Conditions: 150 mM KOAc, 10 mM MgCl2 and 150 mM bicine (pH 8.5), 24 C. The record gives the reactivity of an RNA of 207 nucleotides to 2A3.

[RMDB]
RNA sequence: GGGAACGACUCGAGUAGAGUCGAAAAUCAAACUGAUAUGCACCCGUGCUCCCACCGCCGAGGAGGAAGCCGGGGCCAGAGGUUUGGUCUUUGUUUCUGCCUCGGGUUUUCUAUUCCAGCUAAUUCGGUAGAAAACGUAAUGAUGAGGAACUGGGGAAUCGUCAUUAGUGUUCGCACUAAUGACGAUAAAAGAAACAACAACAACAAC
Reactivity to 2A3 in 0.01 (KOAc 150mM, MgCl2 10mM, bicine 150mM(pH8.5), 24C), signal-to-noise 2, nucleotides 027 to 156: u050c020a000a050a010c010u020g020a010u030a040u200g040c060a270c050c000c040g030u130g000c010u010c010c020c060a300c020c110g110c040c060g140a080g000g010a010g000g000a000a010g010c010c000g000g010g000g010c040c040a050g090a030g110g050u020u020u000g010g040u000c000u010u010u010g010u010u010u000c010u010g000c010c000u020c000g130g010g000u000u000u000u000c020u010a010u150u080c010c000a040g000c130u200a200a040u200u210c120g010g010u050a000g020a030a060a010a020c020g020u050a100a130u150g130a020u150g000a030g070g030a020a020c060u090g000g000g000g000a030